[RMDB]
RNA sequence: GGGAACGACUCGAGUAGAGUCGAAAACUCCUGACGUCCUUGAUGGCUGAGGUUUUUGAAGAUUUGACUAUUGACUACUUCAAAAAGCACUACCCAAAUCUCUCAGUUAAUGUGACACAUGCAGGCAAUCAUACAUCACUUUCGAGUGAUGUAUGAUAAAAGAAACAACAACAACAAC
Reactivity to DMS in 0.01 (KOAc 150mM, MgCl2 10mM, bicine 150mM(pH8.5), 24C), signal-to-noise 9, nucleotides 027 to 126: c130u000c010c010u000g010a120c130g000u000c010c020u000u000g010a120u000g010g010c020u000g010a050g010g010u000u000u000u000u000g010a040a030g010a170u000u000u000g010a120c080u000a150u000u010g010a090c140u000a070c040u010u000c040a020a020a030a040a050g010c070a060c110u010a090c090c040c020a030a050a060u000c070u010c020u000c020a030g010u000u000a070a060u010g010u010g020a040c020a080c140a070u000g010c040a030g010g010c300a110
Reactivity to 2A3 in 0.01 (KOAc 150mM, MgCl2 10mM, bicine 150mM(pH8.5), 24C), signal-to-noise 9, nucleotides 027 to 126: c010u010c000c010u020g030a040c050g030u010c000c020u090u090g080a090u180g110g000c010u010g010a030g020g070u010u030u000u030u050g050a070a040g030a100u160u130u170g060a090c050u080a160u230u120g050a080c040u060a060c010u080u030c000a020a030a010a020a010g050c040a040c070u110a090c040c030c000a030a080a060u050c100u010c000u000c020a010g000u020u060a140a050u130g060u120g030a000c010a000c010a060u170g030c000a010g040g000c030a030

About this RNA:
Chemical mapping of a 177-nucleotide RNA with DMS and 2A3. For 2A3, 23,128 sequencing reads were counted. For DMS the reverse transcriptase was MarathonRT.